About this RNA: This 177-nucleotide RNA was probed chemically with DMS. The reactions ran in a buffer of 150 mM KOAc, 10 mM MgCl2 and 150 mM bicine (pH 8.5), at 24 C. It was measured as part of the RMDB library M2PK90.
RNA sequence: GGGAACGACUCGAGUAGAGUCGAAAAUAAAAGGAGGAGGAGAAAUAUAGCGCGAGAUCCGUCCUCCCACGCGCGUCUCGCGCUGAUAAGCGGAAUAAGAGGAUGAUUAAUAGAUAGCGCGCAAAAACCAUCUAGUACCCUUCGGGGUACUAGAUGGAAAAGAAACAACAACAACAAC
Reactivity to DMS in 0.01 (KOAc 150mM, MgCl2 10mM, bicine 150mM(pH8.5), 24C), signal-to-noise 1, nucleotides 027 to 126: u020a030a100a090a080g010g000a050g000g010a170g000g020a060g000a080a090a080u020a050u010a020g000c020g000c000g000a010g000a030u010c300c020g010u020c020c060u000c020c010c010a090c180g000c020g020c140g020u000c020u000c010g000c010g010c000u000g000a060u000a090a110g060c070g000g010a060a080u000a070a050g000a060g010g000a100u000g000a070u020u000a060a070u000a090g000a130u000a060g020c040g040c000g010c130a010a020a030a100a090